[RMDB]
RNA sequence: GGGAACGACUCGAGUAGAGUCGAAAAUUACACUGAGAGCAUUUAGCCUGAUUACUCUUUAAAUCAAAUCAGGCAAUAGAGAGAAACACGAGAGGUGAAAACCCCACAGCAUUCUGAAAUGUAUUUGAAGGCAACGCUACCUUCGGGUAGCGUUGAAGUGCUAGAUAUAGUUCGCUAUAUCUAGCACAAAAGAAACAACAACAACAAC
Reactivity to 2A3 in 0.01 (KOAc 150mM, MgCl2 10mM, bicine 150mM(pH8.5), 24C), signal-to-noise 2, nucleotides 027 to 156: u100u060a050c070a020c060u160g070a010g000a010g040c020a020u010u030u070a040g000c000c000u000g030a000u000u060a080c000u000c100u210u190u140a100a070a040u280c080a000a000a040u000c000a010g030g000c000a000a000u010a010g010a000g000a000g010a020a120a000c040a000c060g050a050g000a020g080g040u020g010a040a020a020a070c010c010c030c010a040c020a030g010c000a030u110u130c060u110g060a120a110a070u090g040u070a150u090u130u180g100a110a050g040g000c010a000a000c010g000c000u000a000c000c010u000u010c040g050g000g000u000a000g050c000g000u000u000g000a000a000
Reactivity to DMS in 0.01 (KOAc 150mM, MgCl2 10mM, bicine 150mM(pH8.5), 24C), signal-to-noise 1, nucleotides 027 to 156: u000u000a160c110a230c040u010g000a040g020a020g020c000a300u000u010u000a130g040c010c020u000g000a020u000u000a050c050u000c000u020u000u010a060a020a020u000c070a020a120a050u000c020a030g000g010c040a100a020u010a110g010a200g030a120g030a140a050a120c050a120c040g010a090g020a040g030g040u000g010a090a080a050a080c030c000c040c000a090c060a160g040c080a040u000u000c090u010g040a040a110a080u000g020u000a070u000u010u030g000a100a080g050g010c010a030a000c060g010c040u000a010c000c000u010u000c260g040g040g010u000a010g020c010g020u000u000g010a010a140